This 207-nucleotide RNA was probed chemically with DMS and 2A3. 2A3 is a SHAPE reagent: it acylates the 2'-hydroxyl of flexible nucleotides of all four kinds. Conditions: 150 mM KOAc, 10 mM MgCl2 and 150 mM bicine (pH 8.5), 24 C.
RNA sequence: GGGAACGACUCGAGUAGAGUCGAAAAAGCACUAGUUCGCUAGUGCUCUGCCUCCUAAGUCAACGUAGAAGGGUCAUGGCUGAUGACCUAUCGGAAACGAUAGCAAGGCCAUAGCCUGGAGUUGAUAUGGAUACCAACAACCGUUUCGACGGUUGAACGUUAGUUUACGAUUCGUCGUAAACUAACGAAAAGAAACAACAACAACAAC
Reactivity to DMS in 0.01 (KOAc 150mM, MgCl2 10mM, bicine 150mM(pH8.5), 24C), signal-to-noise 4, nucleotides 027 to 156: a000g000c000a000c000u000a010g010u000u020c300g040c010u000a000g010u010g000c000u000c000u000g000c050c020u000c000c010u010a070a190g020u000c020a010a020c010g000u000a180g030a290a270g000g000g030u000c020a030u000g010g010c000u000g010a130u010g010a090c300c000u000a010u010c020g010g010a150a120a270c010g010a020u000a010g010c020a090a180g030g050c000c020a010u000a040g000c000c000u020g020g000a260g020u000u000g000a030u000a160u020g000g000a140u000a060c030c030a080a210c010a030a020c010c000g000u000u010u010c220g020a080c000g020g000u010u000g000a030a180
Reactivity to 2A3 in 0.01 (KOAc 150mM, MgCl2 10mM, bicine 150mM(pH8.5), 24C), signal-to-noise 9, nucleotides 027 to 156: a000g000c000a000c010u010a010g030u080u110c280g050c130u000a000g000u000g000c000u000c000u030g040c000c010u000c010c000u060a120a050g010u000c010a020a030c050g220u300a300g020a030a020g030g000g000u120c030a010u010g000g000c010u020g030a300u130g040a110c000c010u000a000u000c000g050g000a100a030a060c020g000a000u000a000g020c040a080a220g010g000c000c000a000u010a010g010c000c000u010g000g000a020g000u000u000g000a010u010a020u050g010g010a050u130a180c080c040a050a100c010a010a000c020c000g000u020u100u150c250g120a040c000g010g000u010u000g010a060a000